[RMDB]
RNA sequence: GGGAACGACUCGAGUAGAGUCGAAAAAACUUUAGGAGCAAACUGAAAGUACGUUGUUCCACCAUUGAGGCUAUAGGGUAUUAGGAUGGAACAUCUUCGUCAUGUCGCGGAGCGACGUGAUGUAUUUGGAGUAACGCUAGUUCGCUAGCGUUACUCCAAAAGAAACAACAACAACAAC
Reactivity to 2A3 in 0.01 (KOAc 150mM, MgCl2 10mM, bicine 150mM(pH8.5), 24C), signal-to-noise 1, nucleotides 027 to 126: a010a000c000u060u040u000a030g000g010a000g030c080a160a180a020c180u000g070a140a070a050g040u040a070c130g020u050u000g030u000u000c030c030a040c010c000a040u080u070g010a040g030g010c020u110a110u180a300g180g000g010u040a060u090u140a040g030g160a130u000g000g000a000a000c000a010u010c000u110u110c000g000u000c000a000u010g030u000c040g000c030g070g050a230g030c000g000a000c000g000u000g000a000u000g050u110a010u000u000u000